This 177-nucleotide RNA was probed chemically with DMS.
RNA sequence: GGGAACGACUCGAGUAGAGUCGAAAAAGAUAUGGAGGCGUAACAUUCGCUUGGAUUUAUAGGCGCAGUGUAUCGGAAACGAUACACGAGGCCUAUUGUCAGCGAAUGAAGAAGCCUCCUAAGUCAACACUGAGACCAAGUUCGCUUGGUCUCAGUGAAAAGAAACAACAACAACAAC
Reactivity to DMS in 0.01 (KOAc 150mM, MgCl2 10mM, bicine 150mM(pH8.5), 24C), signal-to-noise 2, nucleotides 027 to 126: a170g040a040u010a300u000g000g000a010g020g010c010g020u000a210a190c010a000u000u000c000g000c010u030u000g030g000a020u000u010u020a000u000a000g000g000c000g000c030a300g010u000g000u000a000u000c000g000g000a080a140a270c000g000a020u000a000c010a010c020g000a280g000g000c000c020u010a000u000u010g020u000c000a030g020c000g000a000a010u000g000a030a050g000a140a300g010c010c000u000c000c000u000a000a110g010u000c000a120a200

For DMS the reverse transcriptase was MarathonRT.
The DMS profile rests on 1,589 reads.